[RMDB]
RNA sequence: GGGAACGACUCGAGUAGAGUCGAAAAUCGGGUCAAAUUGUCCUACUUUGCCCGCAAUCGGUGUUCGUUGCUGCGCGUCGAGCUGCAGGAGCACGUCGCCGGUCUGUCCCGGAAGGACAUCGCCAGGUCGGACUACAGUAUUCGUACUGUAGUCCGAAAAAGAAACAACAACAACAAC
Reactivity to 2A3 in 0.01 (KOAc 150mM, MgCl2 10mM, bicine 150mM(pH8.5), 24C), signal-to-noise 6, nucleotides 027 to 126: u050c010g000g000g060u170c060a020a030a040u120u130g010u020c020c000u020a090c030u020u020u010g000c000c000c000g020c010a010a020u020c000g000g000u040g100u170u050c040g070u100u140g050c000u030g030c020g000c010g080u230c190g140a100g020c080u160g000c050a060g010g150a050g080c020a010c030g020u010c000g000c010c000g000g010u070c120u030g010u010c020c000c000g010g030a050a020g010g000a010c000a060u080c050g080c070c040a060g040g110
Reactivity to DMS in 0.01 (KOAc 150mM, MgCl2 10mM, bicine 150mM(pH8.5), 24C), signal-to-noise 2, nucleotides 027 to 126: u010c010g010g010g040u060c060a000a040a070u040u010g000u000c000c000u000a180c190u030u010u000g000c000c020c020g020c140a070a040u010c020g000g020u000g000u000u000c100g010u000u050g010c020u010g000c060g010c020g020u050c180g010a160g000c010u020g050c020a010g030g000a090g010c030a030c110g000u020c000g020c010c000g000g010u000c290u020g000u010c000c000c000g040g030a100a030g000g010a020c010a040u020c110g000c010c040a130g000g040
The record gives the reactivity of an RNA of 177 nucleotides to 2A3 and DMS. For 2A3 the reverse transcriptase was SuperScript II with manganese. In probing experiments dimethyl sulfate is read out at A N1 and C N3, which are open when not base-paired.